[RMDB]
RNA sequence: GGGAACGACUCGAGUAGAGUCGAAAAGCGCAUCAUACGUGAUGCGAGAACUACAGUUCCGCUCCUCUAGCACACAGAGGUCAAUUGGGUGCGACCCCCCCCUCUCCCGUGGGUCAACGGGAACCAAAAAAGACCCUUUAGUUCGCUAAAGGGUCAACUAAUCAGUGGAGUUCGCUCCACUGAUUAGAAAAGAAACAACAACAACAAC
Reactivity to 2A3 in 0.01 (KOAc 150mM, MgCl2 10mM, bicine 150mM(pH8.5), 24C), signal-to-noise 1, nucleotides 027 to 156: g040c020g000c000a000u020c010a000u040a100c180g140u090g020a040u040g000c040g000a040g020a000a040c170u240a090c070a060g010u000u010c010c010g030c070u050c000c010u000c010u020a020g000c020a030c000a010c000a040g010a010g040g000u030c010a020a020u120u100g040g000g020u010g010c010g230a300c000c000c000c000c000c000c000c000u030c000u000c000c000c000g000u010g000g020g020u100c070a000a010c000g000g000g000a000a010c010c000a010a000a070a000a040a040g010a010c000c000c000u000u000u000a010g010u010u050c140g030c000u000a000a020a000g000g000g000u010c000a000a000
Reactivity to DMS in 0.01 (KOAc 150mM, MgCl2 10mM, bicine 150mM(pH8.5), 24C), signal-to-noise 1, nucleotides 027 to 156: g040c020g050c010a030u000c020a090u000a100c290g050u010g030a020u010g040c010g000a060g000a090a080c040u010a120c100a190g010u010u010c010c010g000c090u010c000c010u020c080u000a110g010c040a080c050a040c100a050g010a090g020g010u010c080a020a150u000u020g010g020g060u000g010c080g010a300c000c000c000c000c000c000c000c000u010c040u000c020c010c020g030u010g000g020g030u000c130a060a000c010g040g030g010a000a100c050c030a020a040a070a050a110a090g000a010c000c010c010u000u000u010a020g000u000u010c300g020c020u000a020a010a000g040g010g000u000c000a000a070
Source: RMDB library M2RFPK, as collected in RNAgym. Structure probing data (2A3 and DMS) for a 207-nucleotide construct. The RNA was probed in 150 mM KOAc, 10 mM MgCl2 and 150 mM bicine (pH 8.5) at 24 C. The 2A3 profile rests on 1,558 reads. 2A3 adducts were read by reverse transcription with SuperScript II with manganese.